[RMDB]
RNA sequence: GGGAACGACUCGAGUAGAGUCGAAAACAUGGGGAACUACAUCUGUGUCGCGAGUUCGAUUCUCGCCAGGGCCUGGUCCUGCAGCUCAGUUGGUAGAGCAAGCUGUUCCCCGGACACUUGUCGUCAUAAAAGUUGCCCCCGUUCGCGGGGGCAACAAGUUACUAAGAGCGUUCGCGCUCUUAGUAACAAAAGAAACAACAACAACAAC
Reactivity to DMS in 0.01 (KOAc 150mM, MgCl2 10mM, bicine 150mM(pH8.5), 24C), signal-to-noise 1, nucleotides 027 to 156: c040a170u000g020g140g000g000a010a050c010u000a070c130a070u000c100u010g030u010g000u000c030g000c000g030a020g040u000u020c000g060a300u000u000c000u000c010g030c000c010a130g000g010g000c170c140u010g070g000u000c010c000u000g100c020a050g050c010u000c020a030g000u010u000g010g030u000a130g030a010g020c020a210a210g000c150u000g020u000u000c010c000c000c000g020g000a100c010a050c090u000u000g020u000c020g010u000c030a040u010a110a040a060a180g010u000u000g030c000c000c000c000c000g100u000u030c240g030c070g000g080g080g050g030c020a000a000c000a010a130

The record gives the reactivity of an RNA of 207 nucleotides to DMS.
Values cover nucleotides 27 to 156.
DMS adducts were read by reverse transcription with MarathonRT.